[RMDB]
RNA sequence: GGGAACGACUCGAGUAGAGUCGAAAAGAUAUGGACAGAUGUAUCCGCAGGAUCGUUGAUCUCGGAAACGAGGGAGAUCCUGACCCGGAGACAUCUGUCCUAAGUCAAAGGUCUCUUCGGAGACCAACUAGUCGUAUGGGUUCGCCCAUACGACUAGAAAAGAAACAACAACAACAAC
Reactivity to DMS in 0.01 (KOAc 150mM, MgCl2 10mM, bicine 150mM(pH8.5), 24C), signal-to-noise 1, nucleotides 027 to 126: g000a050u000a300u020g010g030a000c010a000g020a020u010g000u000a010u000c010c010g080c040a010g000g010a000u000c000g000u000u020g010a030u000c020u020c010g000g000a100a120a140c000g020a010g050g000g000a010g000a000u000c000c000u010g000a080c220c200c140g000g010a000g000a040c020a040u000c000u000g000u000c000c000u000a020a070g010u000c060a080a070a130g000g000u000c000u000c020u000u010c160g010g000a010g020a000c010c010a000a050
Chemical mapping of a 177-nucleotide RNA with DMS. The DMS profile rests on 1,160 reads. Conditions: 150 mM KOAc, 10 mM MgCl2 and 150 mM bicine (pH 8.5), 24 C. Reactivities are given for positions 27 through 126. Source: RMDB library TTRDEL, as collected in RNAgym. DMS adducts were read by reverse transcription with MarathonRT.